[RMDB]
RNA sequence: GGGAACGACUCGAGUAGAGUCGAAAAUUUCUUGUCAAAGACCGUUUACUUCUUUUCUGACUCCGUUAAGGAUUAGAGGUUAACCCCAACGGAUGCUUUGUUUGGCUCUUCUCUAGUUAGCUAAACAAUCAAGACUCAGACUAGAGCAUCCCACCAUAUUAACAUAAGACUUCGGUCUUAUGUUAAUAAAAGAAACAACAACAACAAC
Reactivity to 2A3 in 0.01 (KOAc 150mM, MgCl2 10mM, bicine 150mM(pH8.5), 24C), signal-to-noise 4, nucleotides 027 to 156: u100u050u050c030u070u100g090u070c030a070a070a050g020a070c030c000g030u010u040u100a020c010u020u010c010u030u030u030u000c020u050g070a090c060u030c110c090g090u110u090a060a020g020g000a010u000u020a010g010a010g020g010u070u120a060a060c040c010c030c060a010a000c020g020g020a050u040g050c010u010u020u020g000u000u000u030g010g000c000u010c020u160u030c070u010c020u020a040g040u110u030a010g060c020u040a030a000a030c020a020a060u080c060a040a020g050a090c030u040c140a020g040a060c010u050a020g010a010g030c020a040u030c030c000c000a030c030c010a030u020
Reactivity to DMS in 0.01 (KOAc 150mM, MgCl2 10mM, bicine 150mM(pH8.5), 24C), signal-to-noise 2, nucleotides 027 to 156: u000u000u010c010u000u010g000u000c050a120a020a090g030a090c030c080g020u010u000u010a060c020u010u010c030u000u000u000u000c010u010g020a120c070u000c080c070g020u010u000a200a300g020g010a090u000u000a030g000a090g010g030u000u000a040a080c040c030c030c070a080a060c040g010g030a030u000g000c040u000u000u000g020u000u000u000g010g000c010u000c070u010u010c090u000c050u000a040g000u000u000a070g010c000u010a020a020a040c010a040a050u010c060a070a240g030a120c110u000c050a120g020a050c030u000a000g010a000g030c110a080u000c020c000c020a100c040c050a230u000